[RMDB]
The data come from the RNA Mapping Database (RMDB), library OK1LIB. The record gives the reactivity of an RNA of 177 nucleotides to 2A3 and DMS. For DMS the reverse transcriptase was MarathonRT. High DMS reactivity at an A or C suggests that its Watson-Crick edge is free. Reactivities are rounded to 0.1 and cut off at 0 and 3. For 2A3, 2,771 sequencing reads were counted.
RNA sequence: GGGAACGACUCGAGUAGAGUCGAAAAUCGUUGCCAAAUUGCUUACGACAGCCCCUUGAUGGCGCUAGCACCGCAAAGGAUUGGGCAGGCGAACAGGAACUUGCGUUUCCAACGGCGAACUUGGGUGCGAGCACAAGGUAUUCGUACCUUGUGCUCGAAAAGAAACAACAACAACAAC
Reactivity to 2A3 in 0.01 (KOAc 150mM, MgCl2 10mM, bicine 150mM(pH8.5), 24C), signal-to-noise 5, nucleotides 027 to 126: u060c010g020u030u030g000c000c000a030a070a110u150u140g070c020u100u110a070c040g070a040c070a010g040c010c010c010c000u030u150g110a120u140g150g000c030g000c050u020a010g030c010a030c050c020g050c070a060a010a060g040g020a070u070u120g080g010g000c000a020g040g000c000g030a070a030c050a060g080g010a040a030c060u130u140g040c090g050u040u110u020c010c020a020a050c020g020g020c040g010a040a010c020u060u020g060g020g010u090g040
Reactivity to DMS in 0.01 (KOAc 150mM, MgCl2 10mM, bicine 150mM(pH8.5), 24C), signal-to-noise 3, nucleotides 027 to 126: u000c020g010u020u010g000c000c040a040a080a040u010u020g010c040u010u000a110c030g030a090c050a130g000c030c060c010c080u010u000g000a040u010g030g010c200g000c020u000a030g010c090a110c150c010g030c090a050a060a070g000g000a050u040u020g010g000g040c000a030g010g010c000g010a030a090c130a100g000g000a100a040c070u000u020g000c190g030u020u000u010c010c020a150a190c080g000g010c060g000a060a040c060u020u020g000g020g000u000g000